[RMDB]
RNA sequence: GGGAACGACUCGAGUAGAGUCGAAAAUCUGGCUUUUAGGCAAGCUGAUAGAUUUCGGGCGCAGCAUGAACAAUAAUAUACCGGCGGGCAGGGCGCGCCAAACAGCCAGCCAGGGCGCUGGAAUGUCCAUAAUCUAGCCUUUCGAGGCUAGAUUAUGAAAAGAAACAACAACAACAAC
Reactivity to 2A3 in 0.01 (KOAc 150mM, MgCl2 10mM, bicine 150mM(pH8.5), 24C), signal-to-noise 3, nucleotides 027 to 126: u000c020u010g020g010c010u080u070u040u200a120g040g040c040a020a030g000c020u080g060a110u070a120g120a060u060u100u100c080g030g020g000c030g000c020a030g020c010a040u090g060a070a030c060a050a070u190a170a040u130a020u050a210c020c000g020g030c030g020g010g000c030a020g010g060g000c030g020c000g020c010c000a030a080a020c010a010g030c020c010a010g000c010c010a100g080g060g040c050g010c010u000g010g030a090a040u090g040u050c050
Reactivity to DMS in 0.01 (KOAc 150mM, MgCl2 10mM, bicine 150mM(pH8.5), 24C), signal-to-noise 5, nucleotides 027 to 126: u000c020u000g010g020c020u000u000u010u010a120g010g020c110a090a080g010c030u010g020a100u020a050g010a080u000u000u000c110g010g020g010c040g020c040a060g020c060a060u000g010a100a100c130a080a070u000a080a100u010a110u000a100c090c040g000g010c060g010g010g030c040a050g000g010g010c040g020c080g000c030c030a030a050a080c120a110g000c020c020a070g020c030c030a130g010g010g010c100g020c010u000g010g000a070a070u000g000u000c100
Structure probing data (2A3 and DMS) for a 177-nucleotide construct. DMS adducts were read by reverse transcription with MarathonRT. Values are in units of 0.01, from 0 to 300, in steps of 10. It was measured as part of the RMDB library OK2TST. The reactions ran in a buffer of 150 mM KOAc, 10 mM MgCl2 and 150 mM bicine (pH 8.5), at 24 C.